[RMDB]
RNA sequence: GGGAACGACUCGAGUAGAGUCGAAAAGUCCAGCAGGUUCGACUGAUACGCUCCUCCUACAUGAAAAAGGUAGAGGAACAGGCCCUGGGUGCCAGGUCGACUCUGGGCCUACUUACUCUACCUACAGCUCCUUCCGUCCAUUCGUGGACGGAAGGAGAAAAGAAACAACAACAACAAC
Reactivity to 2A3 in 0.01 (KOAc 150mM, MgCl2 10mM, bicine 150mM(pH8.5), 24C), signal-to-noise 2, nucleotides 027 to 126: g070u010c030c040a000g020c020a010g000g050u070u090c030g120a040c080u030g000a060u030a090c050g000c020u000c000c000u030c000c000u030a080c050a150u180g130a090a090a050a010a000g010g000u010a010g000a000g020g020a000a060c040a000g000g000c010c000c000u000g000g010g000u030g120c060c070a070g010g070u140c100g070a000c000u020c010u020g000g000g000c030c020u040a050c000u060u180a020c000u010c000u000a000c000c000u000a000c000a000g000